[RMDB]
RNA sequence: GGGAACGACUCGAGUAGAGUCGAAAAGAGGGCAAUCGUGGAGCUUCCAUCCCAGCAGUACGCCCUUGAAUGGAUGGGCCUCGAAGUUAUCGCCUCAAUAAAGCCCGAGGCAGAGGUUCCGGCGAGAAGGGCAUGGAUUAUUCGUAAUCCAUGCCCUAAAAGAAACAACAACAACAAC
Reactivity to DMS in 0.01 (KOAc 150mM, MgCl2 10mM, bicine 150mM(pH8.5), 24C), signal-to-noise 2, nucleotides 027 to 126: g010a020g030g000g000c040a110a080u000c030g020u000g000g030a030g000c060u000u050c020c000a060u010c000c000c140a140g000c130a150g010u110a090c270g010c000c000c010u010u010g000a130a070u010g030g000a060u060g000g000g010c010c010u010c050g000a150a120g000u000u020a120u060c040g000c010c010u010c110a060a180u070a050a060a080g000c080c060c080g000a020g000g000c030a090g000a050g000g000u000u000c010c000g010g040c060g000a070g000a190
Reactivity to 2A3 in 0.01 (KOAc 150mM, MgCl2 10mM, bicine 150mM(pH8.5), 24C), signal-to-noise 3, nucleotides 027 to 126: g120a060g010g020g030c040a040a090u090c040g120u140g000g010a000g050c030u090u010c050c020a010u020c000c000c030a010g040c030a020g070u080a030c190g010c030c020c000u000u070g070a070a080u190g000g080a110u060g000g020g040c000c000u000c020g020a170a020g030u100u030a100u260c030g010c060c000u030c010a010a030u260a220a140a000g060c020c010c040g000a020g000g030c010a000g000a010g000g000u150u160c000c010g000g000c060g020a040g080a050

Structure probing data (DMS and 2A3) for a 177-nucleotide construct. The 2A3 profile rests on 1,257 reads. It was measured as part of the RMDB library OK1LIB.